[RMDB]
RNA sequence: GGGAACGACUCGAGUAGAGUCGAAAAGAUAUGGAGAUCCUUCAGACAUGUCCGUUGAUCGGAAACGAUCAAACGGACAACAGCUGACUGGGAUCUCCUAAGUCAAACACAUACUUCGGUAUGUGAAGUUAGUCAAUUAGUUCGCUAAUUGACUAACAAAAGAAACAACAACAACAAC
Reactivity to 2A3 in 0.01 (KOAc 150mM, MgCl2 10mM, bicine 150mM(pH8.5), 24C), signal-to-noise 6, nucleotides 027 to 126: g000a010u030a030u100g000g000a000g000a000u000c010c000u020u050c010a030g030a080c100a250u300g010u000c000c000g010u010u010g010a000u000c010g000g030a040a030a020c010g000a000u010c010a050a100a020c000g010g020a000c000a000a000c000a010g030c000u020g020a040c100u090g020g010g000a000u000c000u000c000c000u000a000a000g010u000c010a010a120a040c010a000c000a010u010a010c000u050u070c290g160g000u010a010u010g010u000g010a050a010
Reactivity to DMS in 0.01 (KOAc 150mM, MgCl2 10mM, bicine 150mM(pH8.5), 24C), signal-to-noise 9, nucleotides 027 to 126: g010a040u010a270u010g000g000a020g010a010u000c000c000u000u000c000a010g010a050c100a280u010g010u000c000c000g030u000u000g010a010u010c000g010g000a060a060a100c000g010a010u000c000a010a030a030c000g010g010a000c000a020a030c300a200g010c010u000g000a040c300u010g020g000g000a000u000c000u000c000c000u000a010a060g000u000c010a150a120a240c010a010c000a000u000a000c000u000u010c220g030g010u000a010u000g010u000g000a090a120